[RMDB]
RNA sequence: GGGAACGACUCGAGUAGAGUCGAAAAUCAUCAUACUGUUUAUGAUUGUUCAUCUAGCACAUGCUCCAUAAGGAUUUGAUUUUGCUGUGUUUAUGACAUUGAACUUAUCAAAGUAUGCUAAGGAUGAAUAAUGGGAUAUCAAGUUAGAGGAAGGGUAGCCUAAAAUGGUCUUCGGACCAUUUUAGGCAAAAGAAACAACAACAACAAC
Reactivity to 2A3 in 0.01 (KOAc 150mM, MgCl2 10mM, bicine 150mM(pH8.5), 24C), signal-to-noise 1, nucleotides 027 to 156: u020c000a000u020c010a050u000a100c040u120g180u120u170u230a060u060g000a000u010u010g000u050u000c020a000u040c000u040a000g010c020a000c010a020u120g020c110u000c050c180a090u070a140a190g040g040a100u250u000u000g020a020u000u000u130u300g020c000u000g130u010g200u060u120u020a130u270g040a000c000a000u070u090g000a050a000c000u060u020a040u040c000a040a040a040g000u050a000u000g020c020u000a000a000g130g000a110u050g000a010a060u090a080a010u020g010g000g000a010u040a020u150c010a200a000g040u070u080a010g100a000g140g020a000a040g020g000g050u050a020
An RNA of 207 nucleotides, treated with 2A3 and read out base by base.
The data come from the RNA Mapping Database (RMDB), library OK3TST.
Values cover nucleotides 27 to 156.
For 2A3 the reverse transcriptase was SuperScript II with manganese.